[RMDB]
RNA sequence: GGGAACGACUCGAGUAGAGUCGAAAACGGACGGGAUUUUAGCCUGGUUGCACGUUUACCCAUUUCGUGCUGGGUCCUGGACCCACUUAAGAUGAUAGAAAUAUUAUCGAUUUCUUUACCGUCCGGAACCCGUAUUACUCUUCGGAGUAAUACGGGUAAAAGAAACAACAACAACAAC
Reactivity to DMS in 0.01 (KOAc 150mM, MgCl2 10mM, bicine 150mM(pH8.5), 24C), signal-to-noise 3, nucleotides 027 to 126: c010g000g000a020c010g000g000g000a150u000u000u000u000a110g010c180c080u000g010g000u000u010g020c010a020c010g010u010u000u010a140c050c030c080a150u000u020u010c030g020u000g010c010u010g010g010g010u010c000c190u010g010g020a040c010c010c020a070c140u000u000a100a130g000a020u000g000a020u000a020g000a110a110a120u000a000u000u000a020u000c020g000a140u010u000u000c050u000u000u000a150c010c000g000u000c000c000g010g000a100
Reactivity to 2A3 in 0.01 (KOAc 150mM, MgCl2 10mM, bicine 150mM(pH8.5), 24C), signal-to-noise 2, nucleotides 027 to 126: c000g000g000a000c010g000g000g040a060u020u100u090u300a030g030c060c060u070g090g040u080u120g010c000a000c000g010u020u080u150a140c040c020c000a020u050u060u020c030g000u010g010c010u050g000g000g050u050c030c160u170g080g090a000c000c000c000a010c000u030u040a100a030g010a030u040g000a000u010a020g040a010a020a020u030a020u040u060a030u020c020g030a060u040u100u000c030u020u100u070a090c000c010g000u020c010c020g020g000a010
Conditions: 150 mM KOAc, 10 mM MgCl2 and 150 mM bicine (pH 8.5), 24 C. An RNA of 177 nucleotides, treated with DMS and 2A3 and read out base by base. Values are in units of 0.01, from 0 to 300, in steps of 10. For 2A3 the reverse transcriptase was SuperScript II with manganese. For 2A3, 2,170 sequencing reads were counted. It was measured as part of the RMDB library OK2TRN.